[RMDB]
RNA sequence: GGGAACGACUCGAGUAGAGUCGAAAAAAAAAAGAUAUGGAUCCACCUAAGAGGAUAGUGGAAGCAUACUCGGAAACGAGUAUGUGGAGCUAUCUACCCACCUUAGUGUGGAUCCUAAGUCAAAAAACAAAGCAGAAGAGUUCGCUCUUCUGCUUUGAAAAGAAACAACAACAACAAC
Reactivity to DMS in 0.01 (KOAc 150mM, MgCl2 10mM, bicine 150mM(pH8.5), 24C), signal-to-noise 1, nucleotides 027 to 126: a080a020a050a130a080a160g000a000u000a110u000g020g000a000u010c000c000a020c000c010u000a000a040g010a130g000g010a010u010a000g000u040g010g010a300a220g010c000a000u000a000c000u010c000g000g000a000a000a030c000g000a010g030u000a000u000g000u000g000g010a250g010c020u000a000u000c000u000a040c100c060c150a300c100c010u020u000a000g010u050g020u010g000g000a010u000c000c000u000a020a050g000u000c000a000a040a060a070a010a100